Chemical mapping of a 177-nucleotide RNA with 2A3 and DMS. The RNA was probed in 150 mM KOAc, 10 mM MgCl2 and 150 mM bicine (pH 8.5) at 24 C. The DMS profile rests on 11,778 reads. DMS adducts were read by reverse transcription with MarathonRT. 2A3 is a SHAPE reagent: it acylates the 2'-hydroxyl of flexible nucleotides of all four kinds.
RNA sequence: GGGAACGACUCGAGUAGAGUCGAAAACUGUGAGUGACUGUCAGUCACUGAGUGAGAGAGAGAGACUCUCACACACUCAGUCACACAGAGAGUGUCAGUCACACUCACACUGAGACUCUGUGACACAAUCUUAAGCGUGAUUCGUCACGCUUAAGAUAAAAGAAACAACAACAACAAC
Reactivity to 2A3 in 0.01 (KOAc 150mM, MgCl2 10mM, bicine 150mM(pH8.5), 24C), signal-to-noise 6, nucleotides 027 to 126: c040u020g000u010g030a020g010u010g010a010c000u020g020u100c050a060g060u070c030a010c070u000g000a010g000u020g000a050g000a000g000a000g000a000g010a020g100a140c020u000c000u000c010a010c010a000c000a010c010u010c000a010g060u060c010a010c000a010c040a110g110a010g010a020g210u060g020u030c010a000g000u020c010a010c010a020c070u030c010a010c000a010c030u060g040a020g020a070c010u020c030u070g050u060g080a040c020a010c020a160
Reactivity to DMS in 0.01 (KOAc 150mM, MgCl2 10mM, bicine 150mM(pH8.5), 24C), signal-to-noise 9, nucleotides 027 to 126: c130u010g010u000g010a060g020u000g010a040c000u010g010u000c080a060g010u000c090a090c020u000g000a030g030u000g000a080g000a040g000a030g010a240g000a170g000a110c020u000c000u000c000a070c110a160c030a020c020u000c020a040g010u000c120a080c090a150c130a080g000a060g000a040g010u000g010u000c020a030g010u000c090a090c090a100c120u010c020a040c050a050c100u010g000a210g000a060c020u000c020u000g010u000g000a120c110a080c170a090